Description:
This 177-nucleotide RNA was probed chemically with DMS and 2A3. For DMS the reverse transcriptase was MarathonRT. The reactions ran in a buffer of 150 mM KOAc, 10 mM MgCl2 and 150 mM bicine (pH 8.5), at 24 C.
RNA sequence: GGGAACGACUCGAGUAGAGUCGAAAACAGAUGAUGUUCGCAUCAUCUGAAAUAAAAGCCAUGCAGGAAGGAAGGAGCAUCGCAACCAACCAACCAAAAUAAAAAUCUGUUCCUUCGGGAACAGAAAGGUUAUAGAUUCGUUCGCGAAUCUAUAACCAAAAGAAACAACAACAACAAC
Reactivity to DMS in 0.01 (KOAc 150mM, MgCl2 10mM, bicine 150mM(pH8.5), 24C), signal-to-noise 1, nucleotides 027 to 126: c000a000g000a000u020g000a000u000g000u040u000c300g000c010a000u020c000a000u000c000u000g000a090a050a010u020a040a030a030a100g000c020c020a030u030g020c230a100g010g000a040a190g000g010a040a200g030g060a130g060c010a050u000c070g000c160a060a110c000c020a040a180c050c050a050a270c010c030a080a110a110a060u000a040a120a070a130a050u000c000u020g000u000u000c000c000u000u000c120g030g000g000a000a010c000a000g020a000a020a040
Reactivity to 2A3 in 0.01 (KOAc 150mM, MgCl2 10mM, bicine 150mM(pH8.5), 24C), signal-to-noise 2, nucleotides 027 to 126: c000a000g000a000u000g000a000u010g030u080u120c200g010c090a020u010c000a000u000c000u000g000a010a000a000u050a000a010a010a000g010c020c020a050u120g070c060a090g060g000a070a000g000g000a040a030g020g010a020g030c010a110u070c110g030c060a050a130c010c000a000a020c000c000a000a040c020c010a080a080a050a010u150a020a080a010a010a010u020c000u020g000u000u000c010c020u010u130c270g080g000g000a010a000c000a000g010a000a020a010